[RMDB]
RNA sequence: GGGAACGACUCGAGUAGAGUCGAAAAUGUUCUUCCUCAUUUCAUUUGGUGGUUAAGUGUGAUAGUGUGGCUUGUUUUGCCCUAUGACAUGUGGAUGGAAUAUGUAAAUGUUACUGCCAAGUGGUACUACUCGUCCCACGUUCGCGUGGGACGAGUAAAAAGAAACAACAACAACAAC
Reactivity to 2A3 in 0.01 (KOAc 150mM, MgCl2 10mM, bicine 150mM(pH8.5), 24C), signal-to-noise 2, nucleotides 027 to 126: u250g000u030u030c000u070u040c000c000u000c040a040u020u120u000c000a000u000u010u010g000g000u000g000g030u090u050a180a000g000u000g010u040g180a070u000a000g220u300g050u100g170g100c000u040u050g200u290u290u300u080g000c000c000c000u000a000u240g100a000c000a000u110g000u000g300g000a100u140g100g050a110a190u280a110u260g180u220a000a000a000u220g010u180u220a040c000u000g040c010c000a000a050g000u000g070g080u030a050c000